About this RNA
An RNA of 207 nucleotides, treated with 2A3 and DMS and read out base by base. The 2A3 profile rests on 1,600 reads. For DMS, 4,595 sequencing reads were counted. Source: RMDB library OK3TST, as collected in RNAgym. Values cover nucleotides 27 to 156.

[RMDB]
RNA sequence: GGGAACGACUCGAGUAGAGUCGAAAAGUAAUAGAUAACUGGAUGCAGCGUAGGGCCCAACGCAUAUCCAGUACGAAUGGUACCUGUAAAUAAAAUAUGGGCCCUAGUACAAGUACCAACAGAAGGAUAAGCGAUGGUGAUGUCAAUCACAUUUGCAUAAAUCGUAUCGAUUCGUCGAUACGAUUUAAAAAGAAACAACAACAACAAC
Reactivity to 2A3 in 0.01 (KOAc 150mM, MgCl2 10mM, bicine 150mM(pH8.5), 24C), signal-to-noise 4, nucleotides 027 to 156: g050u040a030a150u060a110g110a070u080a110a100c000u000g000g020a000u060g090c190a110g000c300g010u020a070g020g000g000c030c000c000a000a000c000g000c010a000u020a010u220c000c000a000g000u020a020c040g090a090a150u090g000g000u020a010c020c010u030g000u070a010a100a110u150a080a160a120a070u200a080u020g000g000g000c000c000c000u000a010g020u000a030c000a000a030g000u000a000c010c020a040a030c030a030g120a100a030g060g020a040u030a100a060g010c030g040a010u090g130g100u020g000a020u010g100u270c080a070a010u040c000a030c010a070u030u060u240g030c000a000
Reactivity to DMS in 0.01 (KOAc 150mM, MgCl2 10mM, bicine 150mM(pH8.5), 24C), signal-to-noise 2, nucleotides 027 to 156: g010u000a100a100u010a150g000a170u000a050a050c010u000g000g000a040u000g010c110a050g020c010g040u020a050g010g000g000c030c010c000a080a080c000g030c020a120u010a060u000c010c010a050g020u010a060c110g010a150a100u020g030g000u000a000c000c000u000g000u000a020a120a160u000a040a080a090a180u010a140u000g000g010g020c000c000c000u000a020g010u000a030c000a000a020g010u010a020c000c020a040a170c130a150g020a100a040g020g020a120u000a090a130g020c060g010a040u000g000g030u010g010a060u000g010u000c170a080a070u010c060a040c040a110u000u010u020g070c050a190
Conditions: 150 mM KOAc, 10 mM MgCl2 and 150 mM bicine (pH 8.5), 24 C.